[RMDB]
RNA sequence: GGGAACGACUCGAGUAGAGUCGAAAAGAUAUGGAACACUAUGAAGCCCAGUGACUAUGAAGUCGGAAACGAUGGAGUCAUGGGUGGAGUGUUCCUAAGUCGGCACCACGUACUUCGGUACGUGGAAGUAAUAAAAGCCGUUCGCGGCUUUUAUUACAAAAGAAACAACAACAACAAC
Reactivity to DMS in 0.01 (KOAc 150mM, MgCl2 10mM, bicine 150mM(pH8.5), 24C), signal-to-noise 3, nucleotides 027 to 126: g000a020u000a300u010g000g010a000a010c020a000c000u000a200u010g000a150a300g000c000c000c000a020g010u000g030a000c010u000a170u010g000a080a160g000u010c000g000g000a150a080a120c000g000a010u000g010g010a020g010u000c010a040u000g010g000g010u000g000g000a000g020u010g010u000u000c000c000u000a000a050g010u000c000g000g010c200a250c000c010a010c020g010u010a000c000u010u020c150g010g020u000a000c000g030u000g000g000a010a050
Reactivity to 2A3 in 0.01 (KOAc 150mM, MgCl2 10mM, bicine 150mM(pH8.5), 24C), signal-to-noise 3, nucleotides 027 to 126: g000a010u030a030u100g000g000a030a010c020a000c010u190a300u300g030a030a010g030c010c010c020a220g300u080g050a010c000u010a140u300g080a060a020g020u010c030g020g020a020a080a030c000g010a010u030g010g030a010g010u010c000a020u000g010g000g000u030g020g020a000g020u000g010u000u000c000c000u000a080a000g050u010c010g000g030c030a000c000c000a010c010g000u000a000c010u030u100c300g140g000u000a010c000g010u000g010g000a010a010
Structure probing data (DMS and 2A3) for a 177-nucleotide construct. The reactions ran in a buffer of 150 mM KOAc, 10 mM MgCl2 and 150 mM bicine (pH 8.5), at 24 C. For DMS the reverse transcriptase was MarathonRT.